[RMDB]
RNA sequence: GGGAACGACUCGAGUAGAGUCGAAAAAUGGGCCGCAUACCGAGCGAAGGAUACCGGUAAGGGGAGAGGAGGAAUCCCGAGGGGAUCGCCCACUAAAGAGUAGAGGAAUUCUCGGAAAGCUCUCCCAAAGGCGGGACGUUCGCGUCCCGCAAAAGAAACAACAACAACAAC
Reactivity to DMS in 0.01 (KOAc 150mM, MgCl2 10mM, bicine 150mM(pH8.5), 24C), signal-to-noise 2, nucleotides 027 to 129: a150u020g020g000g010c030c000g090c150a280u000a050c100c020g040a070g030c000g000a060a030g000g020a090u080a060c120c060g020g000u040a060a050g000g000g000g000a000g000a040g140g030a050g030g000a000a110u030c070c040c000g020a010g000g000g000g000a040u010c000g010c040c000c000a060c050u060a000a070a060g060a080g020u000a060g060a010g000g000a090a030u010u010c000u040c100g000g000a000a030a080g060c090u020c030u020c000c000c010a110a080a040g100
Reactivity to 2A3 in 0.01 (KOAc 150mM, MgCl2 10mM, bicine 150mM(pH8.5), 24C), signal-to-noise 2, nucleotides 027 to 129: a000u150g000g030g030c000c020g070c050a030u090a150c000c000g000a010g030c020g040a050a010g000g040a000u030a090c000c000g000g010u040a070a060g020g000g000g020a020g000a000g030g020a010g010g050a010a060u050c010c000c000g050a040g010g040g000g000a000u020c020g100c030c000c000a000c020u140a110a080a000g100a080g020u140a000g000a020g020g040a020a010u070u000c030u000c000g010g080a000a030a010g010c020u000c030u000c010c050c000a030a050a030g030